Structure probing data (2A3 and DMS) for a 177-nucleotide construct.
For DMS, 611 sequencing reads were counted.
Source: RMDB library OK2TST, as collected in RNAgym.
As a SHAPE reagent, 2A3 marks flexible, mostly unpaired nucleotides at the ribose 2'-OH.
[RMDB]
RNA sequence: GGGAACGACUCGAGUAGAGUCGAAAACGUGAUGAGCAAAACCGACGACCAGAUGGCUACUAUGUCGACAUGUAUAAACAAUCCUUUACUCAACGGAGACGCCGUUGAUGGUAGCGCUGUCUAUGACACACCGACGGAGGUUCGCCUCCGUCGGUGUAAAAGAAACAACAACAACAAC
Reactivity to 2A3 in 0.01 (KOAc 150mM, MgCl2 10mM, bicine 150mM(pH8.5), 24C), signal-to-noise 1, nucleotides 027 to 126: c040g020u040g050a160u060g040a040g030c030a010a130a000a040c060c000g020a050c020g020a030c020c050a020g010a080u050g100g000c040u010a050c010u040a000u060g050u050c030g000a040c020a070u140g010u100a080u110a100a050a000c030a040a040u070c000c010u140u100u060a090c020u020c030a020a000c030g030g010a110g100a120c160g000c210c020g000u020u000g030a030u060g020g020u020a010g060c050g000c060u000g000u030c020u090a110u110g040a060c010
Reactivity to DMS in 0.01 (KOAc 150mM, MgCl2 10mM, bicine 150mM(pH8.5), 24C), signal-to-noise 1, nucleotides 027 to 126: c080g010u000g000a160u000g010a120g000c030a140a070a130a070c070c020g050a130c020g000a110c110c110a060g030a080u000g010g030c020u020a040c040u000a070u000g020u010c050g030a110c050a100u000g000u000a010u000a000a040a070c200a120a170u000c040c020u000u010u000a090c020u000c020a010a000c020g020g000a300g010a120c260g000c000c000g000u000u000g020a020u000g000g010u000a020g070c200g010c030u000g030u000c030u010a020u000g010a140c140